Chemical mapping of a 207-nucleotide RNA with 2A3. The reactions ran in a buffer of 150 mM KOAc, 10 mM MgCl2 and 150 mM bicine (pH 8.5), at 24 C.
RNA sequence: GGGAACGACUCGAGUAGAGUCGAAAACUGCCAAUGCUGGUCAUAUGCGAGCUUCUUGCCAUCGCUGAAAUCGCCAUCCUUGCCCUUGAAGUCAACUACAUGGCCGGUAGACGGGCUAUGCAGAUCGACCUUUCCGCCGUAACCCAGCGGUGAGCCACGGUAGUACCGGAUUCGUCCGGUACUACCGAAAAGAAACAACAACAACAAC
Reactivity to 2A3 in 0.01 (KOAc 150mM, MgCl2 10mM, bicine 150mM(pH8.5), 24C), signal-to-noise 2, nucleotides 027 to 156: c050u070g020c010c010a040a090u100g050c060u030g060g000u030c050a040u100a050u230g040c050g040a030g030c020u080u060c010u090u120g010c040c010a100u080c040g000c030u020g050a050a010a020u090c040g010c040c020a080u060c020c020u050u100g060c010c000c000u030u100g040a050a000g000u020c040a050a050c080u030a040c030a020u040g000g020c000c000g010g030u070a060g030a150c080g010g030g000c010u020a020u050g000c000a000g020a140u100c040g030a070c010c000u060u080u000c010c020g010c020c000g000u020a090a030c010c000c010a000g000c010g000g030u000g060a010g030c010c030a030